[RMDB]
RNA sequence: GGGAACGACUCGAGUAGAGUCGAAAAGAUAUGGAUUGAAUAUCCGAUGAAAUGUGCUCCCCACCUCGGAAACGAGAGGCACAUGGAGGAUUUCAAUCCUAAGUCAAAAGCCGUGUUCGCACGGCAACCUAACCACCUAGUUCGCUAGGUGGUUAGGAAAAGAAACAACAACAACAAC
Reactivity to DMS in 0.01 (KOAc 150mM, MgCl2 10mM, bicine 150mM(pH8.5), 24C), signal-to-noise 2, nucleotides 027 to 126: g010a040u000a040u000g000g000a020u000u000g000a010a000u000a040u000c000c000g000a090u020g000a050a130a000u000g000u000g000c010u010c080c030c030c040a210c280c000u000c010g010g000a010a010a050c000g010a010g000a190g020g010c000a010c020a010u000g000g000a030g020g000a000u000u000u000c000a000a000u010c000c000u000a000a040g010u000c010a100a090a080a130g020c010c000g020u000g000u010u000c220g020c000a010c010g010g000c020a010a020
Reactivity to 2A3 in 0.01 (KOAc 150mM, MgCl2 10mM, bicine 150mM(pH8.5), 24C), signal-to-noise 2, nucleotides 027 to 126: g010a010u030a020u080g000g010a010u030u010g020a060a030u240a040u300c020c040g130a300u040g000a000a010a000u010g010u000g000c000u110c040c080c040c090a300c140c000u000c020g000g000a000a010a020c010g020a010g000a070g040g000c000a000c000a010u000g000g020a000g000g020a010u000u000u000c000a000a000u000c000c000u000a000a000g020u000c030a000a070a140a090g000c000c020g010u010g020u030u110c300g000c120a000c000g000g020c000a010a020
Structure probing data (DMS and 2A3) for a 177-nucleotide construct. 2A3 adducts were read by reverse transcription with SuperScript II with manganese. The reactions ran in a buffer of 150 mM KOAc, 10 mM MgCl2 and 150 mM bicine (pH 8.5), at 24 C.